RNA sequence: GGGAACGACUCGAGUAGAGUCGAAAAGAAAAGUAGUCUAGACGUUGACUGCGAACGUCGAAAAAGGUACCAGGGCUUGGUACCGAAGCCCGAAACGUACUAAAGUCAUGUACGGAUGACGAAGAAAGGGUAAGUUUAUCUUCGGAUAAACUUACCCAAAAGAAACAACAACAACAAC
Reactivity to DMS in 0.01 (KOAc 150mM, MgCl2 10mM, bicine 150mM(pH8.5), 24C), signal-to-noise 3, nucleotides 027 to 126: g000a010a040a100a110g000u000a090g010u000c000u000a100g020a090c030g000u000u010g000a090c080u060g050c130g010a070a030c000g000u000c000g020a070a070a040a040a030g000g010u000a040c010c040a050g000g050g000c180u010u030g000g000u000a010c000c010g000a110a050g010c020c000c020g000a120a060a060c020g000u000a010c020u000a160a050a170g020u020c200a060u030g000u010a000c050g000g000a100u040g000a000c030g000a150a100g020a030a060a140
Reactivity to 2A3 in 0.01 (KOAc 150mM, MgCl2 10mM, bicine 150mM(pH8.5), 24C), signal-to-noise 4, nucleotides 027 to 126: g120a010a080a020a020g070u050a000g000u020c000u020a020g020a100c050g030u020u050g090a180c070u130g030c120g000a050a020c000g010u010c010g040a140a000a000a000a000g000g000u010a040c040c040a020g070g120g020c220u140u030g000g000u010a000c000c000g010a010a000g030c000c000c000g010a020a010a000c010g020u010a010c010u160a080a080a280g120u210c080a040u140g010u060a010c000g000g050a070u170g000a030c030g010a010a030g120a100a070a030
Conditions: 150 mM KOAc, 10 mM MgCl2 and 150 mM bicine (pH 8.5), 24 C. An RNA of 177 nucleotides, treated with DMS and 2A3 and read out base by base. DMS adducts were read by reverse transcription with MarathonRT. The DMS profile rests on 3,729 reads. Source: RMDB library OK1LIB, as collected in RNAgym. For 2A3 the reverse transcriptase was SuperScript II with manganese.